[RMDB]
RNA sequence: GGGAACGACUCGAGUAGAGUCGAAAAAAAUCACCUCGGUAUGAUUAGGGUGCGACCUAGGAACCGUAGGGGUAUUCUCAAAGGAAGCUUUUGCAGUGACGCCCAUGUAAGUGGGAUAUAACAACAGAUCAGUUUCGCAGUUUCGACUGCGAAACAACGCAUAAUGCAAGUUCGCUUGCAUUAUGCGAAAAGAAACAACAACAACAAC
Reactivity to DMS in 0.01 (KOAc 150mM, MgCl2 10mM, bicine 150mM(pH8.5), 24C), signal-to-noise 1, nucleotides 027 to 156: a030a090a020u010c000a050c040c000u010c020g010g040u000a080u020g010a250u000u000a050g000g050g040u000g050c120g030a150c000c010u000a060g020g010a100a040c010c010g000u010a030g020g000g010g030u000a050u000u020c030u000c010a060a100a100g040g010a070a180g000c050u000u000u000u000g010c010a100g020u000g000a180c110g000c000c000c000a040u000g000u030a030a140g020u000g000g010g010a090u010a040u020a120a080c020a030a100c050a070g000a090u010c050a150g010u000u010u010c000g020c020a000g010u000u010u010c300g030a040c000u000g010c010g010a000a000a000c000a010a110
Reactivity to 2A3 in 0.01 (KOAc 150mM, MgCl2 10mM, bicine 150mM(pH8.5), 24C), signal-to-noise 3, nucleotides 027 to 156: a000a000a050u120c050a070c010c000u020c000g020g010u190a130u170g020a120u090u030a010g000g050g040u170g150c030g040a140c000c000u010a000g040g020a010a010c010c010g010u170a060g000g000g000g010u010a050u020u000c020u000c000a050a080a000g180g010a110a010g040c020u130u040u110u190g040c110a030g010u020g090a040c060g000c000c000c010a020u040g050u140a150a070g020u040g000g010g030a030u030a000u010a050a000c070a000a020c000a030g090a100u150c020a070g000u000u000u000c000g000c010a000g000u000u000u130c200g100a040c000u000g000c000g000a000a000a000c000a000a000
The record gives the reactivity of an RNA of 207 nucleotides to DMS and 2A3.